RNA sequence: GGGAACGACUCGAGUAGAGUCGAAAAGCUGGGCUCGGUGGCCGCCAGCGAAGACAUCUCCCAUGCUAGUGGCGGAGUUGUCGAUUAGCAGCUUGACUCGGCCGAUGCUCGGAGUCUUGCUGCGAAAGGGAUGGUUCUCCUUCGGGAGGACCAUCCCAAAAGAAACAACAACAACAAC
Reactivity to DMS in 0.01 (KOAc 150mM, MgCl2 10mM, bicine 150mM(pH8.5), 24C), signal-to-noise 2, nucleotides 027 to 126: g000c050u000g010g000g000c000u020c040g000g080u000g020g030c020c030g010c030c000a030g000c070g000a120a090g010a030c030a010u020c030u000c030c000c030a220u010g000c070u000a050g020u000g000g040c100g020g000a070g000u000u020g000u020c030g010a210u020u020a160g010c000a000g000c010u000u010g010a000c000u000c000g000g020c040c210g000a050u040g000c030u030c080g000g010a080g020u000c000u000u000g000c010u000g000c000g000a020a130a100
Reactivity to 2A3 in 0.01 (KOAc 150mM, MgCl2 10mM, bicine 150mM(pH8.5), 24C), signal-to-noise 2, nucleotides 027 to 126: g000c000u000g010g030g030c000u010c120g140g000u170g030g010c050c010g100c040c000a030g020c040g040a060a030g000a000c020a020u000c000u020c000c000c010a070u130g120c030u230a070g110u050g190g050c050g010g000a020g000u030u000g000u070c020g020a010u020u010a030g000c000a000g010c000u020u000g000a000c000u020c000g020g000c000c030g060a100u290g010c060u010c100g240g000a010g000u000c000u010u010g000c010u010g000c000g000a060a030a000
This 177-nucleotide RNA was probed chemically with DMS and 2A3. Conditions: 150 mM KOAc, 10 mM MgCl2 and 150 mM bicine (pH 8.5), 24 C. Values cover nucleotides 27 to 126.